[RMDB]
RNA sequence: GGGAACGACUCGAGUAGAGUCGAAAACGGCGCAUCGAGGCCGAGAUCAUCAAGCCGAUCUACGAGAUCAUGAAGCGCGAGUUCGGCCUCGAGCGCGCGCAGGCGGUGAUCGCGGAGGCCGUGCGCAACUCGCCCACGUAUUCGUACGUGGGCGAGUAAAAGAAACAACAACAACAAC
Reactivity to DMS in 0.01 (KOAc 150mM, MgCl2 10mM, bicine 150mM(pH8.5), 24C), signal-to-noise 2, nucleotides 027 to 126: c060g010g020c000g000c010a050u000c010g010a040g020g000c020c000g000a030g000a040u020c020a150u020c040a090a300g020c020c070g010a000u010c000u000a130c300g000a160g010a010u000c030a090u000g060a120a200g000c000g000c300g000a050g030u000u000c010g030g010c010c040u000c000g010a040g000c000g000c010g010c020g030c010a080g000g010c050g010g000u000g000a040u000c050g030c060g000g000a110g000g000c070c010g010u000g010c010g020c010a090
Reactivity to 2A3 in 0.01 (KOAc 150mM, MgCl2 10mM, bicine 150mM(pH8.5), 24C), signal-to-noise 1, nucleotides 027 to 126: c020g050g040c020g000c040a260u000c010g010a000g000g000c010c040g010a000g030a080u190c090a040u020c020a070a000g030c050c030g030a010u000c000u050a160c300g120a120g040a300u000c090a020u230g200a170a020g000c010g000c010g040a000g020u000u000c010g000g000c000c000u000c000g000a010g000c000g020c000g000c000g000c000a000g000g080c020g000g110u100g080a130u190c070g040c080g090g040a060g130g000c040c000g030u030g000c040g040c010a000